An RNA of 207 nucleotides, treated with DMS and 2A3 and read out base by base. It was measured as part of the RMDB library OK3TST. For 2A3 the reverse transcriptase was SuperScript II with manganese.
RNA sequence: GGGAACGACUCGAGUAGAGUCGAAAAGGGAGCCCAUCCAGGUCGACCGCGGCGAGAUUGUCGAGGUGCCGUGAUGAGCAAUGUGAUGAACUACGCCGGCGACUGCACCGAGUUCGACCCGGACCAGAUCCUCGGCCCCGAUCUGCACGGCGCCUACUACAAGUUGAUAGUUCGCUAUCAACUUGUAAAAAGAAACAACAACAACAAC
Reactivity to DMS in 0.01 (KOAc 150mM, MgCl2 10mM, bicine 150mM(pH8.5), 24C), signal-to-noise 1, nucleotides 027 to 156: g010g000g020a070g020c030c000c030a180u000c000c000a020g000g040u000c010g050a040c050c000g000c010g010g000c020g010a090g050a180u020u000g020u000c040g000a110g000g050u000g050c030c010g080u020g020a140u010g000a030g000c030a170a140u000g060u010g040a190u000g010a050a060c020u000a090c050g010c050c040g000g030c070g010a110c050u000g000c000a120c040c020g000a060g060u000u000c020g000a110c020c000c010g000g000a100c090c050a070g010a160u010c080c180u000c030g030g020c000c000c120c110g010a060u000c030u020g000c020a060c060g000g000c060g020c020c030u000a060c060
Reactivity to 2A3 in 0.01 (KOAc 150mM, MgCl2 10mM, bicine 150mM(pH8.5), 24C), signal-to-noise 2, nucleotides 027 to 156: g010g010g010a030g000c040c000c000a000u030c010c010a000g000g000u010c010g000a020c020c030g080c010g000g000c030g020a060g030a150u110u180g020u050c040g050a030g000g010u010g000c010c010g000u020g050a110u170g050a040g050c040a060a050u130g040u080g020a110u100g040a030a030c000u120a090c060g010c010c000g060g070c030g040a070c100u110g030c040a050c040c060g020a050g010u080u030c010g020a030c020c000c010g000g000a020c010c020a010g010a050u050c020c040u040c110g110g000c110c010c000c000g010a040u000c030u100g000c080a010c030g000g000c010g010c010c010u030a070c010